[RMDB]
RNA sequence: GGGAACGACUCGAGUAGAGUCGAAAAUCCACUAUGAAUCUAGUCACUAAAUAAACACAAUUAGCUACUGUGUGUAAUAGUGCGUGUUGAUAACACAAAAUAAUAGUAUAGUUUUGGAAGAUUAUACGCGCCCUUGCUCCGUUCGCGGAGCAAGGAACGUCCUCAACCUGUUCGCAGGUUGAGGACGAAAAGAAACAACAACAACAAC
Reactivity to 2A3 in 0.01 (KOAc 150mM, MgCl2 10mM, bicine 150mM(pH8.5), 24C), signal-to-noise 1, nucleotides 027 to 156: u030c010c000a010c040u260a240u230g070a090a040u060c060u170a040g170u210c000a000c000u100a060a000a060u030a000a000a000c000a000c000a030a070u200u240a100g000c060u230a000c010u010g010u000g000u000g000u000a000a010u000a000g000u000g040c030g000u010g010u010u040g040a040u130a260a030c090a000c030a030a180a060a060u210a170a050u070a190g040u000a010u000a000g060u000u110u040u060g260g000a140a120g010a040u040u040a040u040a140c010g040c000g100c040c010c000u000u000g000c000u010c040c040g060u110u030c130g000c070g090g000a000g130c000a000a000g000g000a010a000